[RMDB]
RNA sequence: GGGAACGACUCGAGUAGAGUCGAAAAGCAACUUAGGAGUUUAGGCUCCCCGUGCGUGUCUCGAACCAUGCCGGGCCAAACCCACGGGGGCUGGCGGUCCCCGUGCGGUCAAAAUCAAACCGCUGGAAAAACAGUUCUAGCUUCGGCUAGAACUGAACCUCUGUUACACGUUCGCGUGUAACAGAGGAAAAGAAACAACAACAACAAC
Reactivity to 2A3 in 0.01 (KOAc 150mM, MgCl2 10mM, bicine 150mM(pH8.5), 24C), signal-to-noise 2, nucleotides 027 to 156: g030c050a040a080c010u050u060a080g010g030a040g030u090u060u190a140g040g020c060u110c030c000c010c020g120u180g010c020g030u030g050u030c070u000c140g050a090a060c020c000a010u030g010c020c010g010g010g000c040c030a070a120a030c000c000c000a000c000g000g000g000g030g010c000u000g010g000c000g040g000u000c020c000c000c000g000u000g000c100g000g040u010c020a070a070a010a110u080c050a130a090a080c030c030g030c010u040g050g030a090a070a040a000a010c000a000g000u000u000c000u000a000g010c020u050u100c240g040g000c020u020a000g000a000a000c000u000g000a000a000
An RNA of 207 nucleotides, treated with 2A3 and read out base by base. It was measured as part of the RMDB library M2RFPK. The reactions ran in a buffer of 150 mM KOAc, 10 mM MgCl2 and 150 mM bicine (pH 8.5), at 24 C. 2A3 adducts were read by reverse transcription with SuperScript II with manganese.